An RNA of 207 nucleotides, treated with 2A3 and DMS and read out base by base. For DMS, 8,354 sequencing reads were counted. The 2A3 profile rests on 4,380 reads. It was measured as part of the RMDB library OK3TST. Values cover nucleotides 27 to 156.
RNA sequence: GGGAACGACUCGAGUAGAGUCGAAAAAGCGCGGCUUGAACGAGAGCUCUCGUAAGACUAUGACUGACUUCUUACGAGAGUCUUUCAAGCCGAACUGAGUGUAAGAGGUAAGAAGUCAGUCAUAGUCUUACCUCUGCUCUCACUCAGUUCGAACGCACGGAGUGAUAUUAUUCGUAAUAUCACUCCGAAAAGAAACAACAACAACAAC
Reactivity to 2A3 in 0.01 (KOAc 150mM, MgCl2 10mM, bicine 150mM(pH8.5), 24C), signal-to-noise 4, nucleotides 027 to 156: a000g050c040g020c010g020g020c040u080u140g020a030a010c070g010a000g000a000g030c010u020c020u050c060g010u010a020a000g000a000c010u020a020u020g000a000c000u000g000a000c000u000u010c010u010u020a010c040g050a060g040a010g170u010c000u010u060u050c010a020a010g040c000c040g000a020a010c010u040g040a050g100u080g020u080a030a030g030a040g100g020u000a000a010g000a000a010g010u010c010a010g000u010c010a010u020a000g010u000c000u000u000a000c000c000u010c030u030g010c020u000c000u000c010a000c010u020c000a000g000u090u160c030g030a060a030c020g000c020a010
Reactivity to DMS in 0.01 (KOAc 150mM, MgCl2 10mM, bicine 150mM(pH8.5), 24C), signal-to-noise 2, nucleotides 027 to 156: a090g010c060g030c010g040g000c030u000u000g020a030a040c090g020a120g010a060g030c000u000c000u000c010g020u000a010a020g000a050c090u010a040u000g000a050c010u010g000a070c020u000u000c010u000u000a010c020g010a140g010a100g040u000c000u010u000u000c040a080a070g000c040c050g050a000a260c060u010g010a080g010u010g010u010a080a070g010a090g020g010u000a010a030g000a060a060g000u000c010a050g010u000c030a070u000a030g010u010c000u000u000a010c010c010u000c020u000g010c050u000c100u000c000a060c020u000c010a050g000u010u000c030g010a070a040c020g010c010a230